[RMDB]
RNA sequence: GGGAACGACUCGAGUAGAGUCGAAAAAAUCGAAAGGGAUACUGGGUGAACACCUCAGACCCCGAGAGCCUAUGCAUCGAGCCUGAAGUCAUUGGUUUGUUCAUCAAAGGAUCCACAAACGGAUCUACUGACGAUAGUGCUUCGGCACUAUCGUCAGAAAAGAAACAACAACAACAAC
Reactivity to DMS in 0.01 (KOAc 150mM, MgCl2 10mM, bicine 150mM(pH8.5), 24C), signal-to-noise 1, nucleotides 027 to 126: a070a120u000c020g000a110a080a070g020g010g020a110u020a010c040u000g000g000g000u000g010a140a090c300a110c270c000u010c000a060g010a150c020c000c020c010g010a290g010a030g020c000c060u010a060u000g010c090a040u000c050g000a110g020c030c010u000g020a050a130g000u000c150a010u020u020g030g000u000u000u000g000u000u000c020a000u000c170a050a150a230g010g050a000u000c000c000a150c160a010a120a120c200g040g000a010u000c000u000a180